[RMDB]
RNA sequence: GGGAACGACUCGAGUAGAGUCGAAAAGUAAUCACUGCAGCCUAUUUGACCAUUUGUCAUCAGAGAUACCUCCGCACUCAGGCUAUCUCCAAAGGGAUGAAGAGGCUGGAGCUUGAGCAUGCACAGAACAUCGUCUUUAGUUCGCUAAAGACGAUGUAAAAGAAACAACAACAACAAC
Reactivity to DMS in 0.01 (KOAc 150mM, MgCl2 10mM, bicine 150mM(pH8.5), 24C), signal-to-noise 4, nucleotides 027 to 126: g030u000a050a120u000c010a080c020u000g000c000a020g000c010c000u010a120u000u010u000g000a070c010c030a100u000u000u000g000u020c210a200u010c220a120g000a040g020a030u000a040c010c000u000c150c180g000c100a040c120u010c100a020g000g020c300u000a020u000c020u000c000c030a020a040a070g000g010g000a090u000g010a030a020g000a030g000g010c020u010g000g000a030g020c090u010u010g000a040g010c110a080u010g000c100a080c110a110g000a110
Reactivity to 2A3 in 0.01 (KOAc 150mM, MgCl2 10mM, bicine 150mM(pH8.5), 24C), signal-to-noise 3, nucleotides 027 to 126: g020u050a060a050u030c020a010c040u100g010c040a000g020c010c010u040a060u030u040u040g030a010c010c030a120u020u020u090g110u080c080a190u060c060a180g000a000g000a010u000a020c000c010u040c060c110g040c070a070c030u090c010a000g020g000c010u010a000u000c020u000c000c010a030a030a010g080g020g010a060u080g020a020a020g010a010g030g000c000u000g000g050a000g000c060u090u090g010a010g010c040a050u140g010c080a070c000a060g110a120